[RMDB]
RNA sequence: GGGAACGACUCGAGUAGAGUCGAAAACAGAGCUGAUUGGCCAUGUACCUAUCCAAAAUGAGAUCCCAUCUUGCACACUGUGCUAAUUUGAGAUUCUCAUGCCUCCUACUUGGAGAGAUCUGGACUACUAACUGUAUGACGUUCGCGUCAUACAGAAGGUUUAAUCCUGCUUCGGCAGGAUUAAACCAAAAGAAACAACAACAACAAC
Reactivity to 2A3 in 0.01 (KOAc 150mM, MgCl2 10mM, bicine 150mM(pH8.5), 24C), signal-to-noise 3, nucleotides 027 to 156: c020a010g040a020g060c080u110g060a220u240u250g100g000c010c060a100u150g000u100a100c020c000u020a020u050c080c030a070a080a020a080u000g010a000g000a000u010c070c000c000a000u030c010u000u000g000c020a010c030a090c230u200g000u000g020c040u160a040a050u000u010u050g020a000g000a010u300u100c030u000c000a000u050g030c000c000u000c000c000u150a300c100u110u210g030g000a010g000a000g000a020u070c110u050g010g010a040c070u080a030c010u040a300a040c000u000g010u010a000u010g000a000c000g000u010u020c180g040c000g120u000c020a010u010a000c000a000g000a000a000
This 207-nucleotide RNA was probed chemically with 2A3. Reactivities are given for positions 27 through 156. It was measured as part of the RMDB library M2RFPK. Reactivities are rounded to 0.1 and cut off at 0 and 3. For 2A3 the reverse transcriptase was SuperScript II with manganese. For 2A3, 1,159 sequencing reads were counted. Conditions: 150 mM KOAc, 10 mM MgCl2 and 150 mM bicine (pH 8.5), 24 C.